An RNA of 207 nucleotides, treated with 2A3 and read out base by base.

RNA sequence: GGGAACGACUCGAGUAGAGUCGAAAAAUGGUGUAGGUUAGAGGUCCUGCGGCUGAAGGGUUCUGUUGUUGAGACCGUAUUUGCUCUGUGUGAGAGAACGGAAGGAACAAAUAUCAAUAACAAGUGGACAAAUCACAUAUCGUUGAGCUCACCAGCAUCAGGUCUAGGAGUUCGCUCCUAGACCUGAAAAAGAAACAACAACAACAAC
Reactivity to 2A3 in 0.01 (KOAc 150mM, MgCl2 10mM, bicine 150mM(pH8.5), 24C), signal-to-noise 1, nucleotides 027 to 156: a000u050g040g030u000g000u010a070g010g100u080u030a040g040a040g040g070u020c050c080u070g010c060g000g050c070u070g000a060a060g040g000g000u110u000c020u050g030u060u040g000u010u080g020a030g010a030c090c050g040u020a260u090u140u040g000c000u000c020u110g170u000g000u010g140a000g000a000g000a000a000c020g050g020a050a050g070g020a060a000c070a040a040a060u150a080u110c010a010a030u120a040a070c130a200a000g040u010g040g110a090c080a050a060a030u150c040a000c010a030u090a000u120c010g020u010u000g040a040g100c000u000c000a040c040c010a010g030c000a090